[RMDB]
The data come from the RNA Mapping Database (RMDB), library OK1LIB. The record gives the reactivity of an RNA of 177 nucleotides to DMS and 2A3. For 2A3, 476 sequencing reads were counted.

RNA sequence: GGGAACGACUCGAGUAGAGUCGAAAAGAACGCCAAGAGGCGAGACCGAGACCGAGAAUCACGCUACCUCGGAAAAGUGGAAUAGCGUCAGGAGUCCACUGUCGGAAAAGCCGAAAGAACGGCAGAACCGUGCCAUACUCUUCGGAGUAUGGCACGGAAAAGAAACAACAACAACAAC
Reactivity to DMS in 0.01 (KOAc 150mM, MgCl2 10mM, bicine 150mM(pH8.5), 24C), signal-to-noise 1, nucleotides 027 to 126: g000a210a070c300g000c000c000a110a070g010a100g000g000c000g000a020g000a240c090c000g000a030g160a300c000c000g030a000g000a060a030u000c140a040c000g000c010u000a260c060c000u000c060g000g000a010a280a070a000g000u000g010g000a060a080u000a070g010c000g000u060c240a120g060g000a110g000u000c000c000a000c030u040g000u000c000g140g000a090a100a070a150g000c000c000g000a160a140a000g000a090a100c160g000g000c000a100g000a060a060
Reactivity to 2A3 in 0.01 (KOAc 150mM, MgCl2 10mM, bicine 150mM(pH8.5), 24C), signal-to-noise 1, nucleotides 027 to 126: g020a070a000c080g100c180c070a100a000g060a050g060g000c000g000a000g000a000c000c000g000a050g030a150c000c000g000a000g000a000a000u160c090a000c110g120c080u110a000c060c000u080c000g000g090a080a300a000a000g000u000g000g030a040a010u030a100g070c030g040u180c050a020g100g100a030g070u000c000c000a080c000u000g000u080c000g040g000a040a050a050a050g000c000c000g010a100a040a000g140a000a010c000g000g000c000a000g000a060a010
The DMS profile rests on 729 reads. Conditions: 150 mM KOAc, 10 mM MgCl2 and 150 mM bicine (pH 8.5), 24 C.